[RMDB]
RNA sequence: GGGAACGACUCGAGUAGAGUCGAAAAGUAGAUAGUUGGCACCUAAUCUGUGUGCAAGGCACUGAGAAACAAAAGAUAAAAAGCUGUUGUUCUUCAGCUGGUUGGCAGCAUUGAUAUUCCUCCAAUGUACUUGUGCCUGCUUUGAAAACAACAAUGAACGUAUUAGGGGAUUCGUCCCCUAAUACGUAAAAGAAACAACAACAACAAC
Reactivity to DMS in 0.01 (KOAc 150mM, MgCl2 10mM, bicine 150mM(pH8.5), 24C), signal-to-noise 2, nucleotides 027 to 156: g020u000a090g000a100u010a070g020u010u010g000g020c010a090c060c040u010a060a120u010c070u010g030u000g040u000g080c050a090a040g000g030c030a040c020u020g000a030g000a050a050a140c020a030a040a050a080g000a140u010a100a080a100a110a140g010c020u000g020u000u010g000u000u010c050u010u010c060a050g010c040u000g000g030u010u000g020g040c040a100g010c040a030u000u010g000a070u000a160u000u020c070c050u010c090c020a030a050u010g020u000a030c070u000u000g020u000g000c050c010u010g020c050u000u000u010g000a100a090a040a020c050a030a110c060a040a140u000g000a080
Reactivity to 2A3 in 0.01 (KOAc 150mM, MgCl2 10mM, bicine 150mM(pH8.5), 24C), signal-to-noise 3, nucleotides 027 to 156: g060u050a020g020a170u030a060g070u070u060g050g040c040a030c040c010u030a040a160u110c050u110g070u020g000u030g060c050a050a040g080g000c000a010c080u070g040a060g110a100a090a040c070a030a060a100a020g060a070u250a170a180a020a000a030g040c080u030g020u050u000g000u030u030c040u080u010c010a010g020c040u040g050g030u080u110g030g000c030a030g000c010a020u020u000g050a030u030a150u230u110c020c020u100c030c010a000a000u060g010u030a110c080u120u080g020u030g080c000c000u000g010c010u100u160u100g030a020a010a000a000c020a000a010c020a060a120u210g030a040